This 207-nucleotide RNA was probed chemically with 2A3. 2A3 adducts were read by reverse transcription with SuperScript II with manganese. The RNA was probed in 150 mM KOAc, 10 mM MgCl2 and 150 mM bicine (pH 8.5) at 24 C. It was measured as part of the RMDB library PDB130.
[RMDB]
RNA sequence: GGGAACGACUCGAGUAGAGUCGAAAAAUCCUACACAAACGCCUGAGCCCUACUAAUAACAUUAAUUGCCACAUCCCUAACCGCUGCCUACAGCACUCGAAUUAUCUUCUUUGCAUUCCUAGGGAAACCACGUUUCCCACCCCUAGUCCUAAUUAAUCUUGGAUAAUUGGUUCGCCAAUUAUCCAAGAAAAGAAACAACAACAACAAC
Reactivity to 2A3 in 0.01 (KOAc 150mM, MgCl2 10mM, bicine 150mM(pH8.5), 24C), signal-to-noise 2, nucleotides 027 to 156: a030u010c010c000u070a020c040a020c020a050a210a020c030g040c010c040u050g020a040g000c000c000c000u010a040c030u050a030a130u080a130a000c020a030u200u150a130a070u060u090g010c000c010a020c000a030u020c020c010c000u010a050a020c000c020g020c030u040g020c000c030u070a070c060a020g020c010a030c010u020c030g050a010a040u080u080a130u190c040u040u010c000u050u030u060g040c020a040u060u050c010c000u050a040g010g000g010a020a020a000c050c120a090c130g010u010u030u040c000c010c000a000c010c000c000c000u000a000g080u040c000c010u120a120a130u210u170a060a070u030